[RMDB]
RNA sequence: GGGAACGACUCGAGUAGAGUCGAAAACCCAGCGACACCUACAAGGUCUACAAGCGGGGAGCCAACGUCCGGAUAGAUACCACCCUGCUGGGCUUCGACAACAACACCUGGCAACGGGGCAAUCGCAGAAAAUGGAUAGUUUCGACUAUCCAUUUUCAAAAGAAACAACAACAACAAC
Reactivity to 2A3 in 0.01 (KOAc 150mM, MgCl2 10mM, bicine 150mM(pH8.5), 24C), signal-to-noise 4, nucleotides 027 to 126: c000c010c010a000g010c010g040a030c010a040c060c010u110a080c070a170a070g040g000u020c020u070a070c050a120a040g040c020g000g010g010g020a010g020c040c020a070a040c070g070u040c060c020g040g030a030u060a100g050a010u080a110c000c030a040c000c010c010u010g000c010u020g000g030g000c000u090u090c040g100a060c010a120a010c000a010a030c030a060c030c020u020g040g000c020a040a050c060g010g000g000g000c020a030a030u060c040g010c050a030
Reactivity to DMS in 0.01 (KOAc 150mM, MgCl2 10mM, bicine 150mM(pH8.5), 24C), signal-to-noise 7, nucleotides 027 to 126: c010c000c010a130g010c060g010a060c090a070c050c040u000a060c130a120a120g010g010u000c040u010a100c130a120a120g020c050g000g020g000g000a110g010c040c040a070a090c110g020u000c030c040g010g000a110u010a070g010a120u000a100c080c060a110c030c020c030u000g010c010u010g000g010g000c090u000u000c080g020a070c070a050a030c060a060a070c130a080c030c010u000g010g000c060a060a090c120g000g000g010g010c130a060a040u000c060g020c140a150